Chemical mapping of a 177-nucleotide RNA with DMS. The RNA was probed in 150 mM KOAc, 10 mM MgCl2 and 150 mM bicine (pH 8.5) at 24 C. Source: RMDB library RFM100, as collected in RNAgym. The DMS profile rests on 2,379 reads.
RNA sequence: GGGAACGACUCGAGUAGAGUCGAAAACUCAUGAUGUUCGGGUGGUUUGUUAUCGUGUUGUGAGGCAAAAAGCAGAAAGCCCCGAAGUUAAUUCUCAUUAACCACGAGGCUUGAUCUGUAUGCCUAGUUUAUUGAGGCAUUUCGAUGCCUCAAUAAAAAAAGAAACAACAACAACAAC
Reactivity to DMS in 0.01 (KOAc 150mM, MgCl2 10mM, bicine 150mM(pH8.5), 24C), signal-to-noise 2, nucleotides 027 to 126: c000u000c010a070u040g010a080u000g010u010u020c020g000g000g020u000g000g010u010u030u020g000u000u010a120u050c120g030u020g020u000u000g030u020g010a040g030g010c010a010a110a080a160a090g000c000a010g000a020a060a000g000c000c000c050c000g020a130a160g000u010u000a000a070u020u100c190u030c210a090u010u000a050a000c000c110a300c050g010a070g010g000c010u000u000g000a170u010c020u000g020u000a060u000g000c000c000u000a030g040